[RMDB]
Structure probing data (DMS) for a 177-nucleotide construct. Conditions: 150 mM KOAc, 10 mM MgCl2 and 150 mM bicine (pH 8.5), 24 C. It was measured as part of the RMDB library OK2TRN.
RNA sequence: GGGAACGACUCGAGUAGAGUCGAAAACAGGGUCCUCAAAACUGGCUCGGACAGCAGAUUUGACGAAGUCAAAGAACAGCCAUUAAAAUUUUGGAUUUACUGGACGCUGCAAGCGGUGUGGGUGUGGUAGAACGACAGAGUUCGCUCUGUCGUUCUAAAAAGAAACAACAACAACAAC
Reactivity to DMS in 0.01 (KOAc 150mM, MgCl2 10mM, bicine 150mM(pH8.5), 24C), signal-to-noise 1, nucleotides 027 to 126: c060a060g030g000g020u020c010c020u000c110a020a040a070a080c170u000g000g010c030u000c110g010g000a150c110a030g040c110a070g000a230u000u000u000g000a030c050g040a140a100g010u010c040a030a040a040g000a100a090c210a020g000c040c010a010u000u030a110a090a050a150u000u000u020u000g010g020a060u010u000u000a130c060u000g010g010a080c060g040c040u000g010c100a100a090g010c070g000g010u000g040u010g010g010g010u010g000u000g010g050